[RMDB]
RNA sequence: GGGAACGACUCGAGUAGAGUCGAAAAACAAAUCGCAAAUUGGAAGUGAAAGACUUUUCGCCGGAUAUUCCUGGAUCUAGCGCGGCUAAUCGCCACAUACAGGCGGCUGAGUUAUAUAGAAAUGCUAAAUACACUAAGGAUGUUGAAACUUGGGCGCCGCAACGUAUUAAUUCGUUAAUACGUUGCGAAAAGAAACAACAACAACAAC
Reactivity to 2A3 in 0.01 (KOAc 150mM, MgCl2 10mM, bicine 150mM(pH8.5), 24C), signal-to-noise 2, nucleotides 027 to 156: a020c040a010a090a090u090c060g020c100a060a070a080u140u120g080g000a070a030g030u070g080a070a050a040g060a080c030u110u070u100u070c060g000c020c020g050g000a040u060a070u080u060c010c000u060g050g000a060u060c060u060a030g050c080g000c020g080g000c000u030a080a040u050c020g000c040c000a050c030a040u230a050c010a030g040g000c000g000g000c030u010g000a020g040u120u030a050u000a010u010a200g070a030a050a010u090g000c010u030a000a100a000u130a020c040a000c030u060a050a060g040g020a070u080g020u050u040g050a150a040a030c040u070u040g020g030g050c090g050c060
Reactivity to DMS in 0.01 (KOAc 150mM, MgCl2 10mM, bicine 150mM(pH8.5), 24C), signal-to-noise 1, nucleotides 027 to 156: a170c020a060a100a060u000c060g030c050a100a130a130u000u000g020g010a090a140g000u020g040a130a070a190g020a090c020u000u000u020u000c100g010c060c000g050g020a100u010a030u000u010c010c020u000g040g020a030u000c040u020a060g030c040g050c110g020g030c020u010a040a100u020c080g070c020c010a040c090a170u010a120c100a180g030g020c030g020g000c030u030g000a080g020u010u010a080u000a170u000a130g030a040a060a080u000g000c020u000a000a060a110u000a020c050a020c030u000a050a080g000g030a190u000g000u000u000g000a100a040a040c050u000u010g000g000g000c060g050c120